[RMDB]
RNA sequence: GGGAACGACUCGAGUAGAGUCGAAAAGACGGAAAAGAUCGAACCUAAGAACAUCAGGAAUUGUGAACCGAAUCCUAGGGCUCCUAGGCACGCAUCGUCCGAUGCGAAAUAAACACUAACGUCGAAACGGCUAUUACGAUUUCGAUCGUAAUAGCCGAAAAGAAACAACAACAACAAC
Reactivity to DMS in 0.01 (KOAc 150mM, MgCl2 10mM, bicine 150mM(pH8.5), 24C), signal-to-noise 1, nucleotides 027 to 126: g000a050c020g000g000a050a140a160a120g020a050u010c140g080a180a180c050c000u000a040a100g070a170a040c080a000u000c100a000g020g000a030a250u000u000g000u060g020a060a070c250c030g020a010a010u050c000c000u050a090g020g000g000c070u000c000c040u040a000g000g000c200a170c000g000c000a000u000c000g060u030c040c130g050a010u150g000c000g000a000a050a040u000a000a060a080c120a000c120u000a210a110c000g000u000c000g000a030a030a040
Reactivity to 2A3 in 0.01 (KOAc 150mM, MgCl2 10mM, bicine 150mM(pH8.5), 24C), signal-to-noise 2, nucleotides 027 to 126: g000a010c010g060g030a010a000a130a110g060a050u060c050g040a040a050c000c010u000a040a040g040a060a030c070a230u090c060a050g050g040a100a090u140u070g010u080g090a070a030c040c010g000a000a000u020c000c000u010a020g010g130g000c000u060c020c030u020a000g040g000c010a020c020g010c000a000u000c000g190u030c010c090g010a020u030g000c030g060a060a000a000u140a020a040a000c130a010c040u090a220a000c010g000u010c010g070a120a130a060
Structure probing data (DMS and 2A3) for a 177-nucleotide construct. For DMS, 1,325 sequencing reads were counted. The 2A3 profile rests on 1,471 reads. It was measured as part of the RMDB library OK1LIB. The RNA was probed in 150 mM KOAc, 10 mM MgCl2 and 150 mM bicine (pH 8.5) at 24 C.